[RMDB]
RNA sequence: GGGAACGACUCGAGUAGAGUCGAAAAGAUUAGCUUGAUCCACUUCUCUAGCGGUGAACUCGCCUUGAAUUAAUAAGGACAUAUAGUUUCGUAUCAAGCUGACAGAUUUCGACAAGUAAUACGUCGCUGCUACGUCGAAGGAGACGUCAUCUGUCUCGGCCUCUUGACGGUUCGCCGUCAAGAGGCCAAAAGAAACAACAACAACAAC
Reactivity to 2A3 in 0.01 (KOAc 150mM, MgCl2 10mM, bicine 150mM(pH8.5), 24C), signal-to-noise 1, nucleotides 027 to 156: g060a020u050u030a010g000c000u000u000g000a000u060c090c000a080c080u160u080c110u030c080u080a000g080c000g070g000u000g020a140a010c010u030c230g100c000c000u080u040g100a050a090u300u190a140a020u120a150a050g060g050a000c120a060u140a000u030a000g000u000u060u170c060g010u050a000u090c000a000a000g030c000u000g000a010c000a000g010a000u050u150u000c000g000a000c010a130a060g120u080a200a000u020a080c030g010u000c000g010c100u260g010c070u000a030c010g030u000c060g030a160a040g160g050a030g000a010c000g050u060c020a030u000c000u000g010u000c000u000c100

Overview:
An RNA of 207 nucleotides, treated with 2A3 and read out base by base. The data come from the RNA Mapping Database (RMDB), library OK3TST. For 2A3, 350 sequencing reads were counted.